[RMDB]
RNA sequence: GGGAACGACUCGAGUAGAGUCGAAAAGAGGAAGAUACAUUCCCAUUUUUACUUGACACAUAUGUCGGUAAUCACCUCCUGAAAACAGUGGCACUAAAUGAUACACUUGAGAGCUACGGUGUCGAUGGAGUCAUCUCUGGUGUUCGGUGGGAUGAACAAAGUCAUAGGUUUUCGAACCUAUGACUUUAAAAGAAACAACAACAACAAC
Reactivity to DMS in 0.01 (KOAc 150mM, MgCl2 10mM, bicine 150mM(pH8.5), 24C), signal-to-noise 4, nucleotides 027 to 156: g020a100g030g020a080a110g020a180u000a070c050a190u000u000c010c000c000a220u000u010u000u000u000a000c020u000u000g070a030c010a170c190a140u000a100u010g050u000c000g010g000u000a020a040u000c090a240c050c010u000c010c010u000g010a100a070a050a060c060a070g020u000g020g010c030a130c050u000a040a060a090u000g020a230u000a090c090a050c060u010u010g000a130g010a110g010c020u000a020c010g000g020u000g030u000c030g020a200u000g010g000a090g030u010c020a070u000c010u000c010u000g020g000u000g010u000u000c060g030g020u010g000g010g020a050u000g000a070a140c220
Reactivity to 2A3 in 0.01 (KOAc 150mM, MgCl2 10mM, bicine 150mM(pH8.5), 24C), signal-to-noise 5, nucleotides 027 to 156: g100a020g050g070a060a030g040a060u090a150c040a070u030u020c020c000c000a020u060u030u000u010u020a030c030u110u300g040a010c060a010c030a170u130a080u300g010u000c000g000g010u020a020a030u030c020a050c030c000u080c020c020u060g040a030a030a040a020c050a050g040u070g060g010c050a000c050u060a050a140a100u110g040a060u110a130c060a020c060u060u090g060a030g000a030g100c030u050a010c070g090g010u060g040u040c020g010a040u060g010g010a010g070u030c020a080u000c010u000c020u060g030g020u040g030u050u090c040g040g030u010g020g030g020a040u060g010a040a020c060